The record gives the reactivity of an RNA of 177 nucleotides to 2A3 and DMS. The reactions ran in a buffer of 150 mM KOAc, 10 mM MgCl2 and 150 mM bicine (pH 8.5), at 24 C. For 2A3, 846 sequencing reads were counted. DMS adducts were read by reverse transcription with MarathonRT.
RNA sequence: GGGAACGACUCGAGUAGAGUCGAAAAGGGCCGCCACCGUUGUCCAGAUAGUGGGUGUGGGCAUGACCGCCCAGCCGGCCGUCCGCCUCGUACAGGGUGACUCGGUCCCGUCCAGACAGGAUGUAGGCACAUGUGCUGCGUUCGCGCAGCACAUGUGAAAAGAAACAACAACAACAAC
Reactivity to 2A3 in 0.01 (KOAc 150mM, MgCl2 10mM, bicine 150mM(pH8.5), 24C), signal-to-noise 2, nucleotides 027 to 126: g000g010g000c010c000g110c010c000a040c020c060g080u070u000g010u080c010c010a060g040a170u180a030g080u080g070g050g000u130g000u070g070g000g000c020a080u120g130a050c060c020g000c000c000c000a000g050c030c000g000g040c000c030g000u050c010c050g000c000c000u060c000g030u000a030c000a060g000g000g070u080g030a130c050u030c110g000g000u020c000c010c010g000u000c000c000a000g050a160c030a060g070g020a030u060g080u220a030g040g110
Reactivity to DMS in 0.01 (KOAc 150mM, MgCl2 10mM, bicine 150mM(pH8.5), 24C), signal-to-noise 1, nucleotides 027 to 126: g000g000g000c010c080g000c300c020a000c010c060g000u030u010g000u000c050c040a230g030a030u000a020g030u030g000g000g000u020g010u010g000g030g080c070a070u030g020a190c120c090g020c070c000c000a250g030c170c050g070g030c000c000g000u000c050c050g000c050c000u040c060g000u000a040c010a130g070g020g030u000g000a070c110u010c050g010g030u000c040c000c000g030u000c000c010a040g000a240c160a070g010g060a070u020g000u010a070g030g000